Structure probing data (DMS and 2A3) for a 177-nucleotide construct.
It was measured as part of the RMDB libraries RFM100 and RFMREP.
For 2A3, 1,036 sequencing reads were counted.
The reactions ran in a buffer of 150 mM KOAc, 10 mM MgCl2 and 150 mM bicine (pH 8.5), at 24 C.
DMS (dimethyl sulfate) methylates the pairing face of unpaired adenines and cytosines.

[RMDB]
RNA sequence: GGGAACGACUCGAGUAGAGUCGAAAACAUGUCCGACCAGCUGCCUGUUGCCAGAGCCUGAAAAGGUGAACCCACUGGCUCAACAGCUGGAGAGGAAGGAUGACUUGUUCCAGCUGGAACUGUCUGACUGCCACCCAAUUUUCGAAUUGGGUGGCAGAAAAGAAACAACAACAACAAC
Reactivity to DMS in 0.01 (KOAc 150mM, MgCl2 10mM, bicine 150mM(pH8.5), 24C), signal-to-noise 1, nucleotides 027 to 126: c030a170u020g000u060c000c030g010a300c000c010a040g000c030u000g020c200c060u000g030u100u000g000c030c000a030g010a180g000c010c000u000g000a060a050a150a010g030g000u010g000a160a130c080c060c080a290c000u010g000g000c000u000c060a010a030c000a010g000c010u040g000g000a090g000a300g010g000a030a030g000g000a210u000g010a050c000u000u010g020u020u000c000c010a250g030c200u090g040g000a020a030c000u000g000u000c010u010g000a300
Reactivity to 2A3 in 0.01 (KOAc 150mM, MgCl2 10mM, bicine 150mM(pH8.5), 24C), signal-to-noise 2, nucleotides 027 to 126: c080a030u110g000u000c000c000g070a020c030c000a030g000c000u010g040c130c020u030g010u160u170g000c020c010a020g000a000g090c000c000u010g020a000a060a010a000g010g000u010g040a060a160c000c070c000a080c010u000g000g000c000u010c000a010a010c000a000g000c000u000g000g000a010g030a010g010g010a030a060g080g060a020u090g000a000c020u070u140g030u010u000c040c050a120g080c250u270g070g010a000a010c020u030g040u000c000u000g060a100